[RMDB]
RNA sequence: GGGAACGACUCGAGUAGAGUCGAAAAGAUAUGGAUCGUGUGGGAGGAAGCGCAUUCGGAAACGAAUGCCUUCCGAAGAACACACGAGUCCUAAGUCAAAACUUGGUUGGCUUCGGCCAACCAAGAACACGUGAUAUGAGUUCGCUCAUAUCACGUGAAAAGAAACAACAACAACAAC
Reactivity to DMS in 0.01 (KOAc 150mM, MgCl2 10mM, bicine 150mM(pH8.5), 24C), signal-to-noise 3, nucleotides 027 to 126: g000a010u000a100u010g000g020a120u000c000g020u010g010u000g000g020g010a040g030g020a020a000g000c230g030c000a020u000u000c000g030g000a020a010a060c000g000a010a000u000g000c010c010u000u000c010c000g000a030a080g000a140a180c000a000c020a000c000g010a030g010u000c000c000u000a020a130g000u000c020a120a080a110a200c000u000u000g000g030u010u000g000g010c010u000u010c210g010g010c010c000a000a000c000c000a000a000g000a080a140
Reactivity to 2A3 in 0.01 (KOAc 150mM, MgCl2 10mM, bicine 150mM(pH8.5), 24C), signal-to-noise 1, nucleotides 027 to 126: g010a010u020a010u070g010g000a000u010c000g000u010g000u020g040g000g000a050g000g000a010a000g030c050g000c140a010u000u000c000g020g010a040a020a010c010g000a000a000u010g010c000c000u010u000c000c000g010a010a000g000a000a000c000a000c000a000c010g000a010g040u010c000c010u010a020a010g010u010c010a010a020a180a230c000u010u010g030g000u000u000g000g000c000u080u080c300g060g000c000c000a000a000c020c010a000a000g000a000a000